RNA sequence: GGGAACGACUCGAGUAGAGUCGAAAAGAUAUGGAGUGAUCGGACAAGUCUCUCAGAACUACUUGCGCACCUCGGAAACGAGGUGAGUGGUACAAGCUGAGAGGACUUGUCCGAUCACUCCUAAGUCGAAGAAUAAUUGGUUCGCCAAUUAUUCUUCAAAAGAAACAACAACAACAAC
Reactivity to DMS in 0.01 (KOAc 150mM, MgCl2 10mM, bicine 150mM(pH8.5), 24C), signal-to-noise 3, nucleotides 027 to 126: g000a090u010a300u000g000g000a020g040u000g010a010u010c000g000g010a010c000a020a010g000u000c000u000c000u000c000a010g020a080a150c300u000a020c000u010u010g060c030g010c000a010c000c000u010c010g010g000a100a140a300c000g020a000g030g030u000g000a010g030u000g010g000u020a020c190a180a160g000c000u000g010a020g020a040g030g000a010c000u000u000g000u010c000c010g000a000u000c000a000c010u000c000c000u000a010a070g000u000c160